The record gives the reactivity of an RNA of 207 nucleotides to 2A3.
For 2A3 the reverse transcriptase was SuperScript II with manganese.
The reactions ran in a buffer of 150 mM KOAc, 10 mM MgCl2 and 150 mM bicine (pH 8.5), at 24 C.
It was measured as part of the RMDB library M2RFPK.
RNA sequence: GGGAACGACUCGAGUAGAGUCGAAAAACAAGGUACGCCUCGAAAAUAUGACCGGUGUCAUAGCCUCUAGCACACAGAGGUCGCGUGGGUUCAACUCCCCCCCUUUUCCGAGGGUAUCGGAAACCAAAAAACACAAUUUGGUUCGCCAAAUUGUGAACCAGUUUUGAAUCUUCGGAUUCAAAACUGGAAAAGAAACAACAACAACAAC
Reactivity to 2A3 in 0.01 (KOAc 150mM, MgCl2 10mM, bicine 150mM(pH8.5), 24C), signal-to-noise 1, nucleotides 027 to 156: a000c020a010a030g080g020u040a050c010g070c020c030u030c050g050a020a010a030a060u020a000u030g030a020c070c230g210g120u230g050u120c000a020u020a060g000c020c010u060c000u030a030g070c050a030c020a040c000a230g020a010g010g000u010c000g000c000g050u110g000g010g010u080u210c050a080a080c070u060c030c000c010c010c000c000c010u000u100u000u000c000c000g000a000g000g000g030u040a010u000c020g000g000a000a000a000c000c020a010a010a010a010a010a010c000a000c000a000a000u020u010u000g000g000u020u020c030g000c020c000a000a000a000u010u000g000u000g000a000a000